Notes:
Chemical mapping of a 207-nucleotide RNA with DMS and 2A3. DMS adducts were read by reverse transcription with MarathonRT. The RNA was probed in 150 mM KOAc, 10 mM MgCl2 and 150 mM bicine (pH 8.5) at 24 C. The 2A3 profile rests on 3,751 reads. Values cover nucleotides 27 to 156.

RNA sequence: GGGAACGACUCGAGUAGAGUCGAAAAAGAACGAUUACGAUCGAUCAAUGAUGCCCCUCACCCACCUCUGAAGAUCCCAGGUGGGCGAGGGAACGGAGCACGGGAUCACGAGCAGUACGCUGCUCGAAAAAGAACUAGACCUUCGGGUCUAGUUCAAGAAUAUGAAGACGUUCGCGUCUUCAUAUUCAAAAGAAACAACAACAACAAC
Reactivity to DMS in 0.01 (KOAc 150mM, MgCl2 10mM, bicine 150mM(pH8.5), 24C), signal-to-noise 2, nucleotides 027 to 156: a150g020a060a110c060g000a170u000u000a060c080g010a100u010c020g000a060u010c030a130a160u010g000a170u000g000c060c000c000c000u010c000a020c020c000c020a030c020c010u000c050u020g000a140a090g000a130u000c010c010c000a080g040g050u000g030g010g010c010g010a010g000g000g000a000a000c040g020g010a150g060c090a090c080g040g050g030a110u000c000a300c000g020a030g030c020a070g030u000a120c220g010c000u000g020c000u000c010g000a000a070a040a150a050g000a010a000c000u000a090g010a030c000c010u010u000c300g060g030g000u000c000u000a010g030u000u010c000a050a110
Reactivity to 2A3 in 0.01 (KOAc 150mM, MgCl2 10mM, bicine 150mM(pH8.5), 24C), signal-to-noise 4, nucleotides 027 to 156: a010g080a070a000c030g020a020u070u070a080c140g020a020u040c020g010a020u070c050a070a150u160g090a050u140g080c010c000c010c000u000c000a030c000c000c000a000c000c000u040c100u110g060a090a020g010a050u010c000c000c000a000g010g000u010g010g020g000c010g000a000g000g000g000a010a010c030g050g030a060g060c100a070c120g000g000g030a010u010c020a000c040g000a000g000c010a000g010u060a030c190g050c080u010g010c020u010c000g000a000a000a000a000a000g000a000a000c010u010a010g000a000c000c000u030u090c210g060g000g000u000c000u000a000g000u000u010c000a000a000